[RMDB]
RNA sequence: GGGAACGACUCGAGUAGAGUCGAAAAGGAAAAUUUAAACUGGUGGGCGAGUGUCUAGGAUUGACGUUAGACACUCGUUUUUGCCCGUUUCAAACAGGUGAAUACAAACCGUCAUAAAUUAAAAAAACUUGUAAGUUAAGUUCGCUUAACUUACAAGAAAAGAAACAACAACAACAAC
Reactivity to 2A3 in 0.01 (KOAc 150mM, MgCl2 10mM, bicine 150mM(pH8.5), 24C), signal-to-noise 1, nucleotides 027 to 126: g050g010a080a030a050a050u130u150u060a000a000a100c050u040g000g030u030g050g080g000c000g000a030g000u000g010u060c000u000a000g030g050a160u110u260g110a110c050g010u030u020a000g000a000c010a000c000u000c000g000u000u000u000u000u000g000c000c000c040g010u030u020u130c130a100a050a010c000a030g040g000u030g040a050a020u210a110c070a080a190a020c010c000g040u030c000a020u150a300a100a060u140u290a020a160a030a000a010a000a030
Reactivity to DMS in 0.01 (KOAc 150mM, MgCl2 10mM, bicine 150mM(pH8.5), 24C), signal-to-noise 2, nucleotides 027 to 126: g000g000a060a060a110a050u000u000u000a010a080a080c060u020g000g020u010g020g000g020c000g020a010g050u000g000u000c000u020a020g000g000a250u000u010g010a080c130g020u010u000a010g000a020c000a010c000u000c000g000u000u000u000u000u000g000c030c000c030g000u010u000u030c250a090a060a050c070a050g010g010u000g020a030a050u020a230c120a060a110a020c040c010g000u000c030a070u000a050a020a080u020u040a020a030a090a110a050a050a090

Source information:
This 177-nucleotide RNA was probed chemically with 2A3 and DMS. The 2A3 profile rests on 828 reads. Reactivities are rounded to 0.1 and cut off at 0 and 3. The RNA was probed in 150 mM KOAc, 10 mM MgCl2 and 150 mM bicine (pH 8.5) at 24 C.